[RMDB]
RNA sequence: GGGAACGACUCGAGUAGAGUCGAAAAUUGAGACAGAUCAGUGAGGGAGAAGGGAACAUGAACUCUAGUAAUACCUUCAGUUCCUGCUACUUCCUGAAGUAAGGGUGGGUCAUAGGCUAAAGAUGGCAUCUGAAGGAGUAUGGGCCGGAGGGAAGGAACGUUAACCGUAAUUCGUUACGGUUAACGUAAAAGAAACAACAACAACAAC
Reactivity to 2A3 in 0.01 (KOAc 150mM, MgCl2 10mM, bicine 150mM(pH8.5), 24C), signal-to-noise 4, nucleotides 027 to 156: u080u120g010a010g030a010c040a040g050a070u100c020a020g070u040g090a020g020g000g050a170g020a110a070g000g000g010a020a030c040a140u040g020a070a010c030u090c070u150a050g080u120a080a140u110a230c000c000u000u020c010a010g000u010u030c010c010u030g010c010u040a080c000u030u020c000c000u070g050a050a030g020u110a020a040g050g100g050u180g010g000g000u020c050a080u120a040g040g030c060u090a100a060a030g080a040u090g030g050c020a030u020c060u070g020a060a010g030g060a000g010u050a060u110g000g000g000c020c030g020g010a020g020g000g040a010a020g020g030a010
Reactivity to DMS in 0.01 (KOAc 150mM, MgCl2 10mM, bicine 150mM(pH8.5), 24C), signal-to-noise 2, nucleotides 027 to 156: u000u000g000a190g020a140c040a120g000a170u000c010a110g030u000g030a110g000g010g000a060g000a200a160g000g030g000a070a070c020a110u000g010a030a060c040u000c060u000a090g000u000a100a120u000a060c170c020u000u000c000a040g000u000u000c000c000u000g050c030u000a160c020u000u010c020c000u010g000a040a060g000u010a090a090g020g000g020u000g000g010g000u000c050a100u000a110g050g000c080u000a030a060a070g000a100u070g020g000c060a280u000c070u000g000a080a080g000g030a110g010u000a020u000g010g030g010c060c010g000g010a120g000g010g020a110a100g020g010a060